The record gives the reactivity of an RNA of 207 nucleotides to 2A3 and DMS. For 2A3 the reverse transcriptase was SuperScript II with manganese. Reactivities are given for positions 27 through 156. The 2A3 profile rests on 920 reads.
RNA sequence: GGGAACGACUCGAGUAGAGUCGAAAAAGCCCUUCGGGGCUGUGUGUGAUAUGGAUAGCUACCCACCUCUAGAGUGUCGAAGAACAUUUCUCGGAAACGAGAAAUGGGAGACACGAUAGAGAGGCUAUCCUAAGUCCGUAAUCCGAUUCGUCGGAAAUGAUCCAAUUAUCUUCGGAUAAUUGGAUCAAAAAGAAACAACAACAACAAC
Reactivity to 2A3 in 0.01 (KOAc 150mM, MgCl2 10mM, bicine 150mM(pH8.5), 24C), signal-to-noise 1, nucleotides 027 to 156: a010g040c010c000c050u000u000c300g060g010g000g000c090u030g030u000g000u010g010u080g030a090u060a050u130g000g000a010u000a000g010c010u100a190c000c070c070a040c000c010u000c000u010a000g000a030g010u000g000u000c020g160a280a040g020a080a000c000a020u000u000u000c000u000c000g000g030a040a070a050c000g000a000g000a000a000a000u000g000g000g010a050g000a000c000a000c000g000a010u000a000g000a000g000a000g000g000c000u000a000u000c000c000u010a050a040g030u030c030c030g120u110a140a050u130c030c000g030a050u100u100c160g050u000c020g200g000a040a090a110
Reactivity to DMS in 0.01 (KOAc 150mM, MgCl2 10mM, bicine 150mM(pH8.5), 24C), signal-to-noise 2, nucleotides 027 to 156: a110g000c020c020c010u030u000c300g070g000g000g060c050u010g000u000g010u010g020u010g070a130u000a300u000g030g000a070u000a020g000c000u010a060c000c020c030a300c140c010u000c000u020a030g010a300g010u000g010u010c010g010a130a160g020a160a190c010a000u010u000u000c000u000c000g030g000a150a090a250c010g040a030g000a000a010a000u000g000g020g020a300g020a010c000a000c010g020a300u000a010g000a040g030a100g020g000c000u000a020u010c020c000u000a010a130g000u000c040c010g000u000a130a100u000c010c000g000a090u000u000c230g010u000c040g010g000a000a090a140